[RMDB]
RNA sequence: GGGAACGACUCGAGUAGAGUCGAAAAGAUAUGGAGCUAUAGACAGUACCUCCGAAGAACACAUCAGUUGUCUUUCGGAAACGAAAGACAACUGAUGUGGGAGGAGAGUACCGAAGCUCCUAAGUCAUCUAUUCUACAUCUUCGGAUGUAGAAUAGAAAAAGAAACAACAACAACAAC
Reactivity to DMS in 0.01 (KOAc 150mM, MgCl2 10mM, bicine 150mM(pH8.5), 24C), signal-to-noise 4, nucleotides 027 to 126: g020a070u000a300u000g000g010a020g020c000u010a200u010a300g020a290c300a120g000u000a010c010c000u000c000c000g000a120a190g010a200a160c020a000c010a020u000c000a030g010u000u000g010u010c000u000u000u000c000g010g000a100a110a190c000g000a010a020a000g010a010c000a000a000c000u000g020a010u000g010u000g000g000g000a070g000g000a000g010a160g010u000a010c000c010g010a140a080g000c000u000c000c000u000a020a040g030u000c030a120
Reactivity to 2A3 in 0.01 (KOAc 150mM, MgCl2 10mM, bicine 150mM(pH8.5), 24C), signal-to-noise 2, nucleotides 027 to 126: g020a010u110a090u230g010g030a010g000c040u100a110u260a300g180a180c080a060g040u000a010c020c000u000c000c020g110a300a040g030a050a000c030a000c010a010u000c000a000g010u000u010g020u000c000u020u030u010c000g040g100a110a100a020c000g000a020a000a000g050a020c010a020a010c000u000g010a000u000g000u010g000g000g010a000g000g000a000g010a030g000u000a000c000c020g050a040a010g000c010u000c010c000u000a150a010g070u060c000a050

Description
An RNA of 177 nucleotides, treated with DMS and 2A3 and read out base by base. Values cover nucleotides 27 to 126. For 2A3 the reverse transcriptase was SuperScript II with manganese.